Chemical mapping of a 177-nucleotide RNA with DMS. The DMS profile rests on 949 reads. Source: RMDB library TTRDES, as collected in RNAgym. DMS (dimethyl sulfate) methylates the pairing face of unpaired adenines and cytosines.
RNA sequence: GGGAACGACUCGAGUAGAGUCGAAAAGAUAUGGACUGAGGACUAGUCCGUUAUCGGAAACGAUAAUACGGAGGUCACAGUCCUAAGUCAAAACUAGCCAGAGAAUGUUCGCAUUCUCUGGCUAGAACUAAGGCGUAGACUUCGGUCUACGCCUUAGAAAAGAAACAACAACAACAAC
Reactivity to DMS in 0.01 (KOAc 150mM, MgCl2 10mM, bicine 150mM(pH8.5), 24C), signal-to-noise 1, nucleotides 027 to 126: g000a050u000a300u010g010g000a010c000u030g000a260g000g000a050c030u000a130g000u030c000c000g030u000u020a000u000c000g000g010a110a040a150c020g000a010u000a030a080u000a060c100g000g030a100g010g020u020c010a100c000a000g000u000c000c000u010a030a040g010u000c090a040a050a100a300c000u000a010g000c000c000a010g010a040g000a000a010u000g010u000u010c210g040c000a010u000u000c000u020c000u000g000g000c000u000a000g000a000a300